The record gives the reactivity of an RNA of 207 nucleotides to DMS and 2A3. The RNA was probed in 150 mM KOAc, 10 mM MgCl2 and 150 mM bicine (pH 8.5) at 24 C.
[RMDB]
RNA sequence: GGGAACGACUCGAGUAGAGUCGAAAAAGCACCAUGGUGGCUUUGUGCCUGGUUUUGAUUUGCCGCACUGUUAGAGUUGCUACCCAAUGUCUUUAAGUUGAAGAUUUCAACUCAAUUGUUUGAAGGUGAUAAAUUUAUUGGAACUUUUGAGAGCGCAAAUGUCCACCUAAUUCGUUAGGUGGACAUUAAAAGAAACAACAACAACAAC
Reactivity to DMS in 0.01 (KOAc 150mM, MgCl2 10mM, bicine 150mM(pH8.5), 24C), signal-to-noise 1, nucleotides 027 to 156: a100g020c010a040c030c050a110u010g020g050u020g020g050c030u000u000u000g030u010g010c030c030u030g020g000u000u000u000u030g000a260u010u000u020g030c030c010g020c030a040c050u010g010u000u020a040g010a180g030u000u000g010c010u000a090c050c020c010a060a190u010g000u000c050u010u000u000a070a110g020u000u000g020a100a150g000a210u000u000u000c010a030a010c040u010c020a040a100u000u010g020u000u000u010g010a060a030g010g030u010g010a130u000a050a080a100u000u000u000a090u040u000g000g000a050a110c060u000u000u010u000g000a120g000a120g010c050g000c110a040
Reactivity to 2A3 in 0.01 (KOAc 150mM, MgCl2 10mM, bicine 150mM(pH8.5), 24C), signal-to-noise 1, nucleotides 027 to 156: a000g030c010a010c020c040a030u140g060g060u090g020g020c030u100u080u150g010u070g000c020c100u030g050g010u010u040u040u240g060a080u040u090u130g030c040c030g000c030a030c030u040g050u140u200a080g020a040g140u090u020g000c000u060a050c000c020c030a070a050u080g010u010c030u030u160u130a160a050g050u050u070g020a100a040g030a170u030u020u080c010a010a040c000u000c030a000a060u060u060g030u040u080u150g110a160a050g030g010u030g030a010u200a120a040a020u120u200u240a090u000u140g010g010a000a000c030u000u050u120u110g030a030g020a010g060c120g050c090a060

2A3 adducts were read by reverse transcription with SuperScript II with manganese. The DMS profile rests on 3,014 reads. The data come from the RNA Mapping Database (RMDB), library OK3TST.